Source information
This 207-nucleotide RNA was probed chemically with 2A3 and DMS. For 2A3, 2,635 sequencing reads were counted. DMS adducts were read by reverse transcription with MarathonRT. The data come from the RNA Mapping Database (RMDB), library RNAMAK. The RNA was probed in 150 mM KOAc, 10 mM MgCl2 and 150 mM bicine (pH 8.5) at 24 C.
RNA sequence: GGGAACGACUCGAGUAGAGUCGAAAACCCAGCUUCGGCUGGGAAUUAUCCUAAGUCACCGUGAGGCUCGUGACAUGUCCAAGGUCGGAAACGACCUGAGGACAACAGCACGAGCUCCCCACCACGGUGAUAUGGACCAAAGACCCUUCGGGGUCAAUCCGUUUUAGUUAUUCGUAACUAAAACGGAAAAAGAAACAACAACAACAAC
Reactivity to 2A3 in 0.01 (KOAc 150mM, MgCl2 10mM, bicine 150mM(pH8.5), 24C), signal-to-noise 3, nucleotides 027 to 156: c000c000c000a000g000c000u060u100c240g190g000c000u020g000g000g040a020a000u180u120a040u050c000c000u020a100a030g020u000c000a000c000c010g000u000g010a000g000g000c000u020c000g030u000g080a140c040a120u050g000u020c000c000a000a030g020g000u000c000g040g040a100a060a080c010g010a020c000c010u010g030a210g010g030a000c000a020a010c070a020g040c000a010c010g010a010g000c000u010c000c010c000c000a020c010c000a000c000g000g000u000g000a000u000a000u030g010g010a000c090c000a150a100a080g060a010c070c020c000u020u070c230g070g000g000g000u000c000a000a110
Reactivity to DMS in 0.01 (KOAc 150mM, MgCl2 10mM, bicine 150mM(pH8.5), 24C), signal-to-noise 1, nucleotides 027 to 156: c000c000c000a000g030c000u000u000c300g120g070c010u000g010g010g000a000a000u050u000a050u010c030c050u010a140a170g010u000c010a010c010c000g000u000g010a300g000g000c000u010c000g000u000g010a120c060a300u000g040u010c030c010a210a070g020g010u010c000g000g050a230a080a300c010g010a010c040c000u010g000a030g030g000a030c000a020a010c140a080g020c040a000c000g000a020g000c000u000c290c040c010c070a300c090c000a060c000g000g020u000g030a030u010a050u000g000g010a020c060c010a080a160a270g000a080c050c000c020u000u000c120g090g000g000g000u000c000a070a100